[RMDB]
RNA sequence: GGGAACGACUCGAGUAGAGUCGAAAAGCCGCAUGAUAUAAGGCAUAGCUCUGGGUGAGAAAAAUUUAAGGAUAUGCGGCCUCACCGGGGCGAUAGAGCUAGCCUUGAUAUCGAAUAUUUUCGCCCCCUAUAAAUGUAUAUUCGUAUACAUUUAUAGAAAAGAAACAACAACAACAAC
Reactivity to DMS in 0.01 (KOAc 150mM, MgCl2 10mM, bicine 150mM(pH8.5), 24C), signal-to-noise 6, nucleotides 027 to 126: g020c000c000g010c010a030u020g010a050u000a040u040a020a020g000g010c000a110u000a010g020c010u000c000u000g010g000g010u000g000a030g000a080a070a070a090a090u020u050u050a110a130g010g010a140u020a070u010g010c000g000g010c000c000u000c000a010c010c020g000g000g010g030c000g010a030u010a020g010a010g000c000u000a010g000c000c000u000u000g000a060u040a020u010c040g000a130a120u050a100u020u000u010u000c000g020c000c000c000c160
Reactivity to 2A3 in 0.01 (KOAc 150mM, MgCl2 10mM, bicine 150mM(pH8.5), 24C), signal-to-noise 9, nucleotides 027 to 126: g010c010c010g000c040a060u140g060a040u090a050u080a190a010g010g010c090a170u010a000g000c000u000c030u070g120g000g000u020g010a010g060a020a030a040a070a070u240u300u240a160a060g100g020a030u030a020u220g010c000g000g010c000c000u000c000a000c000c010g000g000g000g000c010g000a010u060a010g000a000g000c000u010a000g000c010c000u010u030g070a050u050a040u110c030g020a080a050u140a190u110u110u040u010c000g000c010c000c000c010